[RMDB]
RNA sequence: GGGAACGACUCGAGUAGAGUCGAAAAUUUGACUGGUGGUGUCCAGGUAGAUGUGGGUGUUCUACCUUAUCAAAUUGGAAAUCAUCCUGCAAGGAUCUAAAUGAGGUUAAUCCACAGAGCCAUGUACCAUGUAGAGCCGUUUCGACGGCUCUACAUGAAAAGAAACAACAACAACAAC
Reactivity to DMS in 0.01 (KOAc 150mM, MgCl2 10mM, bicine 150mM(pH8.5), 24C), signal-to-noise 1, nucleotides 027 to 126: u000u000u000g000a030c030u010g000g050u020g020g000u000g050u000c040c040a080g000g050u020a080g010a140u000g020u040g000g020g000u010g000u030u010c150u000a040c000c000u010u000a110u000c120a020a170a170u000u000g030g000a080a130a090u020c080a060u010c000c060u000g000c110a090a080g000g000a060u000c130u000a100a090a100u000g000a080g000g000u010u000a090a060u000c000c030a040c050a090g020a210g000c040c040a040u000g050u000a120c160
Structure probing data (DMS) for a 177-nucleotide construct. For DMS the reverse transcriptase was MarathonRT.